Structure probing data (2A3 and DMS) for a 207-nucleotide construct.
Reactivities are given for positions 27 through 156.
For DMS the reverse transcriptase was MarathonRT.

RNA sequence: GGGAACGACUCGAGUAGAGUCGAAAAAAAAGAAGAAGAUAUGGAAGUGAAAACUGAAAUUGAAACUGCUCAGCAAGUGUCUGUAGAGACACCCAAGAGUGACGAGGCUAAGCCUCAACCAUCAUUGUUGGAAAUACAGAUUUCCAAAUUGCUAGAAGAUAAUUUAGGUGUUCGCACCUAAAUUAUCAAAAGAAACAACAACAACAAC
Reactivity to 2A3 in 0.01 (KOAc 150mM, MgCl2 10mM, bicine 150mM(pH8.5), 24C), signal-to-noise 2, nucleotides 027 to 156: a000a030a030a000g040a020a010g050a060a000g010a010u060a030u090g020g020a060a020g010u060g070a050a100a020a040c020u050g010a050a120a100u120u030g020a040a000a030c010u060g000c030u010c020a040g010c010a040a010g000u010g050u070c000u030g080u150a070g030a010g000a230c000a020c010c000c000a030a030g010a020g050u040g020a010c070g000a010g000g040c070u080a010a160g010c000c000u020c000a000a040c030c010a010u110c020a070u060u120g060u030u010g040g030a040a000a000u100a150c070a070g250a190u040u020u010c010c020a060a020a030u070u070g010c030u160a050g100a160a000
Reactivity to DMS in 0.01 (KOAc 150mM, MgCl2 10mM, bicine 150mM(pH8.5), 24C), signal-to-noise 1, nucleotides 027 to 156: a060a010a040a060g030a030a070g000a080a090g020a180u020a040u010g010g000a170a060g060u000g000a030a050a150a110c030u010g020a130a070a050u000u010g020a220a110a080c040u000g000c000u000c040a070g000c090a080a080g040u000g000u000c010u010g050u000a050g010a030g020a020c040a030c020c030c000a100a160g000a020g010u000g020a080c090g000a030g010g010c000u000a060a080g000c000c000u000c000a060a040c110c040a060u000c000a050u000u010g000u000u000g030g030a040a050a070u000a170c140a170g010a160u010u010u000c010c010a000a120a100u010u010g020c030u030a140g020a100a290